[RMDB]
RNA sequence: GGGAACGACUCGAGUAGAGUCGAAAAGAUAUGGAACAGCUCCCCACCGUUACCACUGCGUUGAUCACAGAUCUUAUCGGAAACGAUAAGAUCUGUGGGAGCAGUGUAACGAGGCUGUUCCUAAGUCGCUACUACAUACGUUCGCGUAUGUAGUAGCAAAAGAAACAACAACAACAAC
Reactivity to DMS in 0.01 (KOAc 150mM, MgCl2 10mM, bicine 150mM(pH8.5), 24C), signal-to-noise 3, nucleotides 027 to 126: g000a120u000a150u010g000g030a010a000c010a020g000c010u000c210c050c010c050a300c170c010g000u000u000a010c190c140a020c000u010g010c010g010u000u000g000a050u010c010a020c000a000g000a010u010c000u000u010a000u000c000g000g000a090a100a150c010g000a010u000a000a000g000a000u000c000u000g020u000g030g000g020a030g030c000a010g020u000g020u000a010a010c000g030a080g040g000c030u000g020u000u000c000c000u010a000a100g000u000c190
Reactivity to 2A3 in 0.01 (KOAc 150mM, MgCl2 10mM, bicine 150mM(pH8.5), 24C), signal-to-noise 4, nucleotides 027 to 126: g110a130u300a170u300g010g000a000a000c010a020g030c000u290c090c060c000c000a010c000c020g010u010u010a070c180c130a040c180u000g000c000g250u300u050g010a010u030c000a000c000a000g000a010u000c000u000u010a000u000c000g050g000a130a050a050c010g010a000u000a000a000g000a010u000c010u000g000u000g010g000g000a020g000c000a020g010u000g000u000a000a000c010g000a000g020g030c000u000g000u000u000c010c000u000a030a030g300u220c200